Structure probing data (2A3 and DMS) for a 177-nucleotide construct. Conditions: 150 mM KOAc, 10 mM MgCl2 and 150 mM bicine (pH 8.5), 24 C. DMS adducts were read by reverse transcription with MarathonRT.
RNA sequence: GGGAACGACUCGAGUAGAGUCGAAAAGUGCGACAUUUCGAUGUCGCACAAACCCAAAUGGUGGCACGUAACUAAACAAGCCGGGAAAAGCCAGAUGCCAACGUCCUUAGCCCUUCGGGGCUAAGAAUCGCUGAAUCUUAUUCGUAAGAUUCAGCGAAAAAGAAACAACAACAACAAC
Reactivity to 2A3 in 0.01 (KOAc 150mM, MgCl2 10mM, bicine 150mM(pH8.5), 24C), signal-to-noise 2, nucleotides 027 to 126: g000u000g000c020g000a010c010a020u020u050u150c270g090a010u020g000u000c000g000c030a000c000a000a010a000c000c000c000a040a060a050u150g050g000u040g020g000c020a000c050g070u090a080a030c140u110a200a000a040c060a120a000g060c060c010g050g030g020a110a100a010a000g010c070c020a050g030a140u100g050c010c010a020a040c020g060u060c030c010u000u020a000g010c000c000c000u000u030c240g040g010g020g000c000u000a000a000g000a010a010
Reactivity to DMS in 0.01 (KOAc 150mM, MgCl2 10mM, bicine 150mM(pH8.5), 24C), signal-to-noise 2, nucleotides 027 to 126: g000u000g000c000g000a010c010a010u010u010u010c230g000a020u000g020u000c000g020c000a000c010a000a080a150c000c000c010a060a140a090u010g010g010u000g000g000c000a050c140g010u010a110a210c110u060a130a080a090c090a050a120g000c060c030g000g040g000a060a060a150a070g010c010c030a060g010a110u040g000c020c050a040a070c160g000u010c030c000u010u000a000g000c000c000c000u010u010c220g060g010g000g010c000u000a000a000g000a070a130